[RMDB]
RNA sequence: GGGAACGACUCGAGUAGAGUCGAAAAUAAUCAAGAUGAAUCGUUUUUAGUUUGCUUGCUUACCUUAAGGGCCAGCAUGAGAUCGACUUGAAUCUUUUUAUGUAGGCAGAUAGCGACGGAAUUUAAAACUAAUUACUGCGUUCGCGCAGUAAUUAGUAAAAGAAACAACAACAACAAC
Reactivity to DMS in 0.01 (KOAc 150mM, MgCl2 10mM, bicine 150mM(pH8.5), 24C), signal-to-noise 3, nucleotides 027 to 126: u040a070a110u020c100a080a120g000a140u010g000a110a100u000c070g040u000u010u010u000u010a060g000u010u000u010g010c000u000u020g000c010u010u000a110c080c090u010u030a070a020g030g010g000c060c040a120g000c030a080u000g000a040g000a020u000c030g010a090c110u020u000g000a060a080u020c010u000u000u010u010u010a030u020g000u020a060g000g020c040a040g000a060u000a030g000c070g020a040c020g000g010a040a120u000u030u010a050a060a070
Reactivity to 2A3 in 0.01 (KOAc 150mM, MgCl2 10mM, bicine 150mM(pH8.5), 24C), signal-to-noise 5, nucleotides 027 to 126: u190a010a050u110c060a030a040g030a050u170g080a060a090u070c020g040u040u070u020u010u010a130g040u030u120u130g020c000u000u010g000c010u050u060a150c020c000u050u120a070a170g040g000g000c020c010a000g010c010a020u050g050a040g010a070u050c010g030a040c050u060u050g020a070a050u010c020u050u070u020u000u030a130u200g040u060a030g010g000c000a020g020a220u100a020g040c030g020a020c030g010g040a040a030u080u130u130a080a100a000